[RMDB]
RNA sequence: GGGAACGACUCGAGUAGAGUCGAAAAUUUCUCAUACAUAAAAUUGAGAUGAUGAUGGUAUUUAACUCAUACCGUUUUGUGAGGAUAAUAAGUUAAAUCACGUAAAGUGCUUUAACAGUGCUUGGCAUCUACUCGGUCAAUUCGUUGACCGAGUAGAAAAAGAAACAACAACAACAAC
Reactivity to DMS in 0.01 (KOAc 150mM, MgCl2 10mM, bicine 150mM(pH8.5), 24C), signal-to-noise 2, nucleotides 027 to 126: u000u010u010c000u020c010a080u010a100c100a080u020a080a030a070a130u000u010g050a060g010a090u000g030a090u010g000a110u020g000g020u000a030u010u000u010a100a130c140u000c240a020u020a020c040c050g020u000u000u010u000g000u010g000a030g000g010a080u000a040a100u000a060a070g000u000u000a000a000a000u000c020a020c000g000u010a110a130a120g020u000g000c160u010u000u000a000a010c030a070g010u000g020c060u000u000g000g010c170a080